[RMDB]
RNA sequence: GGGAACGACUCGAGUAGAGUCGAAAAAAGGAAGGACACAGACGCGAACCGUGAGUGGAACCCUCGAUCCUUUAUUGGGGGGUACACUCGAGGAGUGGAAGGCGGGGAGGAGGGGGCUGAGGGCUAAGGACCAGGAUGUUCGCAUCCUGGAAAAGAAACAACAACAACAAC
Reactivity to DMS in 0.01 (KOAc 150mM, MgCl2 10mM, bicine 150mM(pH8.5), 24C), signal-to-noise 2, nucleotides 027 to 129: a000a000g030g040a050a050g040g020a050c070a110c150a080g050a110c030g000c050g020a110a110c000c000g000u000g020a000g020u000g020g030a060a070c000c030c020u050c000g030a010u030c120c120u030u070u060a060u070u070g000g000g000g000g000g000u050a060c050a010c030u010c030g000a060g000g000a080g000u070g000g020a040a030g070g020c080g000g000g000g000a070g000g000a100g000g030g000g000g000c000u030g010a070g000g000g110c180u050a020a010g040g030a110
Reactivity to 2A3 in 0.01 (KOAc 150mM, MgCl2 10mM, bicine 150mM(pH8.5), 24C), signal-to-noise 6, nucleotides 027 to 129: a000a000g090g020a050a010g030g010a010c020a000c030a090g110a060c050g020c030g040a060a010c000c020g030u050g030a020g040u050g010g050a080a060c020c000c000u000c030g060a080u110c030c030u100u190u160a120u160u100g010g010g000g000g020g010u080a040c040a020c050u010c010g010a050g000g030a030g010u130g040g070a090a020g060g050c100g010g020g000g000a120g030g000a100g000g000g000g010g000c030u050g040a060g000g030g030c020u090a070a030g060g010a030